[RMDB]
RNA sequence: GGGAACGACUCGAGUAGAGUCGAAAAGAUAUGGAAUGCGGGUGGGAGUUGUUCGGAAACGAAUACAACAUCGAUCACUACAUUCCUAAGUCAAAGUCCUCUCAGUACUUCGGUACUGAGAGGACAACACCUAGAAAGGGUUCGCCCUUUCUAGGUGAAAAGAAACAACAACAACAAC
Reactivity to 2A3 in 0.01 (KOAc 150mM, MgCl2 10mM, bicine 150mM(pH8.5), 24C), signal-to-noise 3, nucleotides 027 to 126: g010a010u090a030u140g000g030a020a010u050g040c300g210g130g010u060g020g100g000a060g000u020u010g020u000u020c020g010g000a040a040a050c030g020a040a030u270a150c020a020a000c010a220u190c080g160a120u090c000a000c020u050a010c000a010u000u000c000c000u010a120a010g020u030c050a080a030a040g000u010c000c000u000c000u000c000a010g010u000a010c000u020u230c290g120g000u000a000c000u020g000a000g000a000g000g000a000c000a000a000
Reactivity to DMS in 0.01 (KOAc 150mM, MgCl2 10mM, bicine 150mM(pH8.5), 24C), signal-to-noise 3, nucleotides 027 to 126: g010a020u000a300u000g000g010a040a000u000g010c060g000g010g020u010g000g000g000a080g010u000u000g010u010u000c020g010g000a110a040a120c010g020a030a080u010a080c050a010a020c010a120u000c090g010a120u010c010a020c000u000a070c000a010u010u000c000c000u010a040a130g020u010c020a080a100a190g000u000c000c000u000c000u000c000a000g000u000a000c000u000u010c210g010g010u010a000c000u000g020a010g010a000g010g010a000c010a020a050
The data come from the RNA Mapping Database (RMDB), library TTRDEL.
Structure probing data (2A3 and DMS) for a 177-nucleotide construct.
2A3 adducts were read by reverse transcription with SuperScript II with manganese.
The DMS profile rests on 3,487 reads.
The 2A3 profile rests on 6,878 reads.
The reactions ran in a buffer of 150 mM KOAc, 10 mM MgCl2 and 150 mM bicine (pH 8.5), at 24 C.
Values cover nucleotides 27 to 126.